[RMDB]
RNA sequence: GGGAACGACUCGAGUAGAGUCGAAAAUCCCUGAAUGGAAAAGAGGGAGGAACUCUCGCUGGUUGGCGAGGGCCGGGGUAUGGUCAGCUUCGGCAAAUUAUUAACUUGGAUGCAGAGACCACAUCCUUGUUCCUAUGUAUUUCGAUACAUAGGAACAAAAAGAAACAACAACAACAAC
Reactivity to 2A3 in 0.01 (KOAc 150mM, MgCl2 10mM, bicine 150mM(pH8.5), 24C), signal-to-noise 9, nucleotides 027 to 126: u010c000c000c000u030g130a140a110u130g010g180a060a040a050a050g100a060g020g030g010a060g020g070a050a040c020u020c000u010c080g000c020u080g190g210u230u300g030g000c000g000a010g000g010g000c000c000g000g000g000g000u210a040u120g010g000u010c010a000g000c010u010u000c000g000g000c020a010a070a040u210u190a110u110u140a100a070c090u050u090g010g000a000u010g020c050a020g060a010g000a230c000c000a010c000a000u000c000c000u000
Reactivity to DMS in 0.01 (KOAc 150mM, MgCl2 10mM, bicine 150mM(pH8.5), 24C), signal-to-noise 7, nucleotides 027 to 126: u010c000c000c000u020g000a120a080u020g010g010a090a040a080a090g010a040g010g000g020a090g000g000a100a090c050u010c020u000c010g010c000u000g010g020u050u030g000g020c020g010a020g000g000g000c020c000g000g010g000g020u000a020u000g000g000u010c020a260g000c010u000u000c010g010g000c080a060a080a080u030u050a100u030u050a070a120c190u020u010g010g010a000u010g000c110a080g010a170g000a010c010c000a210c020a020u000c000c010u010